[RMDB]
RNA sequence: GGGAACGACUCGAGUAGAGUCGAAAAGAUAUGGAAAUACGGAUUUCGAUAAGCUAACCUCGGAAACGAGGUGUAGCUUUUGACGAAAGAAGUAUUUCCUAAGUCAAAAGCCACGUUCGCGUGGCAACGAGAUAUUCUCGUUCGCGAGAAUAUCUCGAAAAGAAACAACAACAACAAC
Reactivity to 2A3 in 0.01 (KOAc 150mM, MgCl2 10mM, bicine 150mM(pH8.5), 24C), signal-to-noise 1, nucleotides 027 to 126: g030a020u070a070u210g000g010a000a010a000u020a000c030g030g020a040u000u020u030c030g020a050u020a140a020g000c010u030a010a000c010c000u000c000g050g040a120a060a060c020g010a010g000g020u020g020u000a000g000c000u010u010u000u040g050a020c000g010a000a000a000g050a040a030g000u030a000u000u010u010c000c000u020a030a010g010u000c030a000a000a210a060g020c010c000a010c000g040u070u150c300g000c010g090u000g000g000c010a010a000
Reactivity to DMS in 0.01 (KOAc 150mM, MgCl2 10mM, bicine 150mM(pH8.5), 24C), signal-to-noise 3, nucleotides 027 to 126: g010a080u010a300u000g000g010a030a010a010u000a010c010g000g010a300u000u000u000c000g000a190u000a010a030g010c000u000a050a020c000c010u000c000g010g020a120a140a120c010g020a010g000g000u000g000u000a010g040c000u000u000u000u000g010a210c150g020a010a000a020g010a300a170g000u000a000u000u000u000c000c000u000a010a070g000u020c030a060a100a110a160g020c000c000a010c030g010u000u000c200g040c040g050u010g000g040c000a000a060